[RMDB]
An RNA of 207 nucleotides, treated with DMS and 2A3 and read out base by base. The reactions ran in a buffer of 150 mM KOAc, 10 mM MgCl2 and 150 mM bicine (pH 8.5), at 24 C. It was measured as part of the RMDB library M2RFOK. High 2A3 reactivity points to a flexible backbone, as in loops and unpaired stretches.
RNA sequence: GGGAACGACUCGAGUAGAGUCGAAAACGGUAUUGGUCAAGGCUAUACCGACAGCGCACCUUCAGAAGGGCGCUUAAUCCCCGGCCAAGCGCCGAAAUAUGAAUAGACACCGCUGGGCUGGUAGGGCAAAACAUGGCGAUCUUCGGAUCGCCAUGAAGUAUAAGUUAGCCUUCGGGCUAACUUAUACAAAAGAAACAACAACAACAAC
Reactivity to DMS in 0.01 (KOAc 150mM, MgCl2 10mM, bicine 150mM(pH8.5), 24C), signal-to-noise 2, nucleotides 027 to 156: c040g050g010u000a010u010u000g080g030u000c020a150a120g080g010c010u000a090u020a030c000c020g020a110c100a070g030c000g030c020a090c000c000u000u020c160a240g010a180a120g000g010g000c010g000c030u010u000a030a150u000c010c020c000c050g020g010c000c010a040a030g060c020g020c030c020g010a020a050a090u000a170u000g000a110a160u000a170g010a180c030a050c080c030g020c000u010g050g020g020c020u000g010g000u020a070g000g020g000c060a070a060a070a250c000a020u000g010g000c000g010a030u000c000u010u030c260g050g010a000u000c000g000c000c000a000u000g000a000a090
Reactivity to 2A3 in 0.01 (KOAc 150mM, MgCl2 10mM, bicine 150mM(pH8.5), 24C), signal-to-noise 2, nucleotides 027 to 156: c010g010g020u050a070u100u200g090g000u070c050a090a070g100g000c010u000a010u000a000c020c000g010a020c040a020g000c010g000c030a280c110c000u060u180c060a040g040a150a000g060g010g000c010g000c030u000u000a000a020u000c000c000c000c000g000g010c010c000a040a010g000c010g010c050c030g070a070a060a000u210a070u090g090a080a050u060a090g030a060c050a020c070c030g010c020u030g000g080g000c010u000g020g060u080a080g030g010g020c040a010a080a050a050c000a030u000g000g000c010g000a000u000c000u020u010c070g100g000a000u000c000g000c000c000a010u000g000a000a000